[RMDB]
Record summary
This 177-nucleotide RNA was probed chemically with 2A3 and DMS.
RNA sequence: GGGAACGACUCGAGUAGAGUCGAAAACGGGGUACGAUGGAUAGUAAUAAUACACCCGAUAUACAGUCCCGUACCCAUAGACUGCGUCGGAGAUUUUCGGGUGUAUUAUUCUCUGAUACGCGGUCAAGGUAGUCGGUGAUUUCGAUCAUCGACUACCAAAAGAAACAACAACAACAAC
Reactivity to 2A3 in 0.01 (KOAc 150mM, MgCl2 10mM, bicine 150mM(pH8.5), 24C), signal-to-noise 7, nucleotides 027 to 126: c050g010g000g000g010u010a010c000g020a090u110g010g020a010u030a070g110u110a110a110u060a070a000u000a050c000a000c000c000c010g010a010u080a010u030a160c070a020g020u000c000c000c000g000u000a000c000c000c010a000u030a020g000a000c000u000g000c000g010u020c000g000g000a010g000a010u010u040u060u140c040g000g000g000u000g000u000a000u000u000a000u040u010c000u000c000u000g010a020u010a050c010g000c000g000g000u000c000a000a010
Reactivity to DMS in 0.01 (KOAc 150mM, MgCl2 10mM, bicine 150mM(pH8.5), 24C), signal-to-noise 4, nucleotides 027 to 126: c100g000g000g000g000u000a010c000g000a150u070g010g000a020u000a120g010u000a040a080u050a050a040u000a000c000a000c010c000c010g020a210u040a090u030a060c120a290g000u000c000c010c010g000u010a000c000c000c000a050u020a060g000a020c000u010g010c000g000u000c010g000g000a020g000a080u050u010u020u020c030g000g000g020u000g000u010a010u010u010a030u020u010c000u000c000u000g000a060u020a010c010g030c000g000g000u000c010a110a090

For 2A3 the reverse transcriptase was SuperScript II with manganese. The DMS profile rests on 15,297 reads. It was measured as part of the RMDB library OK1LIB. The RNA was probed in 150 mM KOAc, 10 mM MgCl2 and 150 mM bicine (pH 8.5) at 24 C.